[RMDB]
RNA sequence: GGGAACGACUCGAGUAGAGUCGAAAAUCAAGAAGAUCAUUAAGAUUUCGCACGCCAAAUCAUGAAUGUCUUAGACUUCGAGUAUCAAACAUAAAACACGCCACAAAAAUAUAACGCGUCAGACUACGUUGCCCUAUGACUUCGGUCAUAGGGCAACAAAAGAAACAACAACAACAAC
Reactivity to 2A3 in 0.01 (KOAc 150mM, MgCl2 10mM, bicine 150mM(pH8.5), 24C), signal-to-noise 1, nucleotides 027 to 126: u010c000a010a110g000a060a040g010a170u130c000a000u040u260a010a060g020a020u030u000u040c060g000c000a150c100g010c010c050a040a040a040u050c140a060u170g030a000a050u080g100u010c000u040u000a000g060a000c000u000u000c000g030a000g000u030a000u110c030a110a010a030c000a100u130a280a000a140a000c010a000c000g070c060c000a090c000a010a130a000a230a000u170a080u280a300a040c030g000c000g010u140c080a140g030a060c080u150a080c210
Notes: Chemical mapping of a 177-nucleotide RNA with 2A3. The data come from the RNA Mapping Database (RMDB), library OK1LIB. The RNA was probed in 150 mM KOAc, 10 mM MgCl2 and 150 mM bicine (pH 8.5) at 24 C. For 2A3, 400 sequencing reads were counted.